The record gives the reactivity of an RNA of 177 nucleotides to DMS and 2A3. For 2A3, 1,766 sequencing reads were counted. DMS adducts were read by reverse transcription with MarathonRT. Conditions: 150 mM KOAc, 10 mM MgCl2 and 150 mM bicine (pH 8.5), 24 C.

RNA sequence: GGGAACGACUCGAGUAGAGUCGAAAAUUUGUAAGACGUCUGAUGACGUGUGGGAAAACACUAGAAAUAUUAACUUGCUGUAAAGCAUCCUACUGCCAGCGGAAUCACAUCUGGUAACAGAUGCCUCUCAAGCGUGAGAUUUCGAUCUCACGCUUGAAAAAGAAACAACAACAACAAC
Reactivity to DMS in 0.01 (KOAc 150mM, MgCl2 10mM, bicine 150mM(pH8.5), 24C), signal-to-noise 2, nucleotides 027 to 126: u030u000u050g020u040a070a020g010a100c110g030u000c030u050g010a080u020g010a010c050g030u030g000u010g000g000g000a000a070a090a110c090a080c060u000a080g030a070a080a110u030a130u040u020a170a110c060u000u050g000c020u000g000u030a090a070a050g010c110a020u000c030c020u000a030c080u000g000c010c010a000g040c090g000g020a120a100u040c230a160c000a000u000c000u010g000g000u050a100a180c010a050g000a020u000g000c040c000u030c050
Reactivity to 2A3 in 0.01 (KOAc 150mM, MgCl2 10mM, bicine 150mM(pH8.5), 24C), signal-to-noise 3, nucleotides 027 to 126: u060u020u060g070u010a140a060g100a040c010g010u050c010u080g210a120u230g020a050c080g040u050g020u080g090g100g000a000a070a100a040c080a040c020u030a050g180a110a100a020u300a090u110u110a030a200c040u060u070g020c010u050g040u200a050a070a000g000c000a070u020c010c000u060a040c030u030g000c010c000a010g020c040g050g080a060a160u230c040a070c010a070u050c000u000g000g000u040a020a000c000a010g010a000u000g020c000c000u040c000